Chemical mapping of a 177-nucleotide RNA with DMS and 2A3. The reactions ran in a buffer of 150 mM KOAc, 10 mM MgCl2 and 150 mM bicine (pH 8.5), at 24 C. For 2A3, 6,810 sequencing reads were counted.
RNA sequence: GGGAACGACUCGAGUAGAGUCGAAAAGGAGGCAGGAUCAUUGCUGGUUUUAUUUACCACUAUAUUUCCAGUGGCCAGCACACAGUAGCCGCUAGAUGUGUAAGUGAUAAAUGAUUGAAAUAAUUGCACAAUAACAGUGGUUCGCCACUGUUAUUGUAAAAGAAACAACAACAACAAC
Reactivity to DMS in 0.01 (KOAc 150mM, MgCl2 10mM, bicine 150mM(pH8.5), 24C), signal-to-noise 8, nucleotides 027 to 126: g020g020a120g010g010c040a040g000g000a090u010c090a070u000u000g010c020u000g010g010u000u000u010u000a030u010u010u010a090c030c010a030c020u000a050u010a060u000u000u000c030c050a040g030u000g000g020c010c040a080g020c080a080c170a070c150a100g020u000a100g010c010c010g020c020u000a050g010a040u010g000u000g010u000a040a080g020u000g010a040u000a010a030a030u000g000a050u010u010g010a070a070a080u010a090a110u010u000g000c270
Reactivity to 2A3 in 0.01 (KOAc 150mM, MgCl2 10mM, bicine 150mM(pH8.5), 24C), signal-to-noise 5, nucleotides 027 to 126: g110g010a040g000g030c020a020g020g070a050u090c030a060u090u090g020c020u030g060g030u050u070u020u050a120u030u070u060a020c010c000a000c010u020a010u020a030u130u060u020c030c010a010g010u000g010g000c020c020a060g050c040a020c010a000c000a030g100u110a010g020c000c000g000c020u020a010g020a090u030g030u010g000u060a110a120g030u010g070a040u060a050a070a030u070g050a050u060u100g090a090a080a040u230a030a100u200u140g020c090